An RNA of 207 nucleotides, treated with DMS and 2A3 and read out base by base. Values are in units of 0.01, from 0 to 300, in steps of 10. 2A3 adducts were read by reverse transcription with SuperScript II with manganese. For DMS, 4,274 sequencing reads were counted. It was measured as part of the RMDB library RNAMAK. The reactions ran in a buffer of 150 mM KOAc, 10 mM MgCl2 and 150 mM bicine (pH 8.5), at 24 C.
[RMDB]
RNA sequence: GGGAACGACUCGAGUAGAGUCGAAAAGCGUACUACGUAAGAUUGAAACCACUACCCACCGCUAUACCGAAGCUUCUCCCAAAUAGGAGAAGCUGUUAUAGCGAGGUGGUCGUACGUCUUACGUAUCGCAAAAUACCAGAGAUUCGUCUCUGGUAAACAAUGUGGCUUUGUUCGCAAAGCCACAUUGAAAAGAAACAACAACAACAAC
Reactivity to DMS in 0.01 (KOAc 150mM, MgCl2 10mM, bicine 150mM(pH8.5), 24C), signal-to-noise 2, nucleotides 027 to 156: g000c000g020u000a030c080u010a000c000g000u000a010a010g000a000u020u000g010a300a080a020c000c000a000c000u000a050c020c010c050a300c170c000g000c010u000a020u000a010c110c040g000a110a020g010c010u000u000c010u000c000c000c010a080a160a210u000a020g030g010a010g010a030a010g030c000u000g000u000u000a010u020a010g010c010g000a050g040g030u010g000g020u000c020g000u000a300c300g020u010c000u000u000a010c010g030u000a020u000c070g000c000a030a050a120a170u000a020c000c000a030g020a050g000a150u000u000c300g020u000c010u000c010u010g010g000u010a000a040a130
Reactivity to 2A3 in 0.01 (KOAc 150mM, MgCl2 10mM, bicine 150mM(pH8.5), 24C), signal-to-noise 3, nucleotides 027 to 156: g020c020g020u100a080c050u000a000c030g000u000a010a000g000a020u090u300g080a250a070a030c030c020a010c000u010a010c000c000c030a080c070c030g000c000u010a010u010a010c030c060g280a200a000g000c000u000u010c000u070c010c020c060a210a300a250u300a110g000g000a000g000a000a000g010c000u000g000u000u000a000u000a010g000c000g000a030g000g000u010g000g010u000c010g020u020a030c020g000u000c010u000u000a000c000g010u000a000u220c000g000c000a000a090a000a070u040a000c000c000a010g000a000g000a000u020u170c180g210u010c060u000c010u020g010g000u030a000a010a000